The record gives the reactivity of an RNA of 177 nucleotides to DMS and 2A3.
The data come from the RNA Mapping Database (RMDB), library OK2TST.
The RNA was probed in 150 mM KOAc, 10 mM MgCl2 and 150 mM bicine (pH 8.5) at 24 C.
For 2A3, 1,323 sequencing reads were counted.
RNA sequence: GGGAACGACUCGAGUAGAGUCGAAAAGAGAAACUGGUGGCGCUGGCCGCGCUGAUGCCGAUCGUUGCCGGCAUCGGUGGCAAUUCCGGCAACCAGACCAUCACCAUGAUCGUCCGCGCCAUCGCGACACGCACGUCGUAUUCGUACGACGUGCGUGAAAAGAAACAACAACAACAAC
Reactivity to DMS in 0.01 (KOAc 150mM, MgCl2 10mM, bicine 150mM(pH8.5), 24C), signal-to-noise 2, nucleotides 027 to 126: g000a080g000a090a130a110c170u000g010g040u000g000g030c040g000c040u000g070g010c110c090g010c060g030c070u000g010a070u010g010c140c000g000a110u000c220g000u000u000g000c090c000g000g010c190a020u000c050g010g030u000g010g000c110a050a090u000u000c080c000g030g000c000a100a030c080c120a090g020a060c140c060a070u000c020a040c080c090a070u000g010a130u000c130g000u000c040c030g010c020g000c030c020a000u000c010g030c120g000a070
Reactivity to 2A3 in 0.01 (KOAc 150mM, MgCl2 10mM, bicine 150mM(pH8.5), 24C), signal-to-noise 1, nucleotides 027 to 126: g050a000g040a040a140a040c070u120g030g030u010g040g030c020g000c090u090g030g010c050c030g090c040g050c050u010g000a010u050g050c090c060g000a050u120c060g090u060u150g050c020c000g040g000c020a030u010c010g020g020u060g050g000c040a000a040u130u080c030c000g000g020c010a060a070c000c020a010g030a040c000c000a010u030c010a020c060c050a090u160g020a040u180c030g010u020c030c000g000c010g030c010c000a020u020c010g010c000g070a010